[RMDB]
RNA sequence: GGGAACGACUCGAGUAGAGUCGAAAAGCUUGGGAGAGCCGUGGGGUUCGAAAACGAUCCGGCGGCGGCCUGGGAGGGCCUUCACGCGGGUCCUCAAGGGGAGAACCACCGAUGGAGAAUACGCUCCUCGUUCACUCUGGUUCGCCAGAGUGAACGAAAAAGAAACAACAACAACAAC
Reactivity to 2A3 in 0.01 (KOAc 150mM, MgCl2 10mM, bicine 150mM(pH8.5), 24C), signal-to-noise 2, nucleotides 027 to 126: g010c000u120u130g010g050g000a090g010a020g080c000c000g040u020g030g090g010g020u050u070c040g110a100a080a080a070c000g040a010u020c010c020g080g000c000g000g000c000g050g040c010c000u120g000g070g010a030g000g010g010c000c000u000u050c100a090c070g040c100g000g000g030u030c050c010u060c010a060a070g030g000g020g000a100g010a040a050c000c000a030c010c020g040a020u110g000g020a040g030a050a050u110a140c110g020c010u040c010c000
Reactivity to DMS in 0.01 (KOAc 150mM, MgCl2 10mM, bicine 150mM(pH8.5), 24C), signal-to-noise 1, nucleotides 027 to 126: g010c010u030u010g000g000g000a040g020a210g000c020c000g000u000g040g000g020g000u060u020c030g000a120a030a010a250c300g000a080u000c000c000g000g000c000g000g000c070g000g000c060c000u000g110g080g000a010g020g000g000c020c020u020u000c120a050c050g000c230g000g000g030u000c000c000u000c020a010a020g000g010g000g000a100g000a040a100c090c040a060c000c120g000a150u020g030g020a010g000a190a120u020a100c220g010c050u010c060c020